RNA sequence: GGGAACGACUCGAGUAGAGUCGAAAAACAGGAUAUACGUAUCCUGAACACAUGAAGCAUAUGAUGACAAACUGGAUCUGAUAUUCUAUGUUGAAUUUCUUCAAUCCAACCCUGAGCUUCAUGUUAAAUCUGAUUUUGAGUUCGCUCAAAAUCAGAUAAAAGAAACAACAACAACAAC
Reactivity to DMS in 0.01 (KOAc 150mM, MgCl2 10mM, bicine 150mM(pH8.5), 24C), signal-to-noise 5, nucleotides 027 to 126: a120c010a020g010g010a000u000a010u000a090c220g010u000a020u010c000c010u000g000a150a070c180a030c010a000u010g010a010a000g010c010a120u040a100u020g030a100u030g000a080c170a090a090a130c240u020g010g030a010u000c130u000g000a030u000a010u010u000c000u000a120u050g020u050u000g000a030a020u000u000u000c040u000u000c260a060a010u010c010c000a020a160c050c050c020u000g000a110g000c000u010u000c000a000u000g010u000u010a040a060
Reactivity to 2A3 in 0.01 (KOAc 150mM, MgCl2 10mM, bicine 150mM(pH8.5), 24C), signal-to-noise 9, nucleotides 027 to 126: a000c010a010g000g020a000u020a000u010a030c230g070u020a010u010c000c000u020g070a110a020c060a000c000a030u010g000a000a000g000c020a020u070a030u300g110a080u150g050a100c100a080a160a020c090u020g000g000a010u020c030u040g010a010u000a020u050u000c020u040a130u300g230u170u130g080a020a020u050u040u030c020u050u050c040a020a020u000c010c000a000a070c040c000c000u050g040a010g020c000u000u000c000a000u000g000u000u050a080a200

Notes:
Conditions: 150 mM KOAc, 10 mM MgCl2 and 150 mM bicine (pH 8.5), 24 C. An RNA of 177 nucleotides, treated with DMS and 2A3 and read out base by base.